[RMDB]
RNA sequence: GGGAACGACUCGAGUAGAGUCGAAAAGGGGAUCGGGUCCUAGGAGGAGAGCCCAGUGGCAAAACCACUGACCGAUCUGAGGAGAGCACCAGCGUAUCCUUGGUAUCUGACACUGACUACGACACUCCUACUAAGGUGGAUUCGUCCACCUUAGUAGAAAAGAAACAACAACAACAAC
Reactivity to 2A3 in 0.01 (KOAc 150mM, MgCl2 10mM, bicine 150mM(pH8.5), 24C), signal-to-noise 6, nucleotides 027 to 126: g010g000g020g010a040u050c040g010g010g040u010c030c030u030a070g020g080a050g030g040a070g020a030g040c010c050c010a010g000u010g020g020c060a030a040a050a110c010c000a010c010u000g020a030c010c030g010a030u010c030u050g030a030g030g030a030g010a010g010c020a030c110c050a040g020c020g040u120a040u050c010c000u020u030g040g020u110a080u040c040u070g040a030c010a020c100u090g060a050c040u100a060c090g050a010c020a020c070u020c010
Reactivity to DMS in 0.01 (KOAc 150mM, MgCl2 10mM, bicine 150mM(pH8.5), 24C), signal-to-noise 9, nucleotides 027 to 126: g010g010g010g010a080u000c040g010g010g010u000c040c060u000a110g020g010a180g010g010a100g010a100g020c080c050c020a020g020u000g000g000c090a080a070a090a300c020c020a020c010u000g000a110c070c050g000a050u000c020u000g010a050g000g010a050g000a230g000c050a080c160c120a080g000c040g010u010a130u000c020c020u000u000g000g010u000a040u000c030u010g010a130c070a070c070u000g010a090c060u000a060c100g000a060c080a070c060u000c080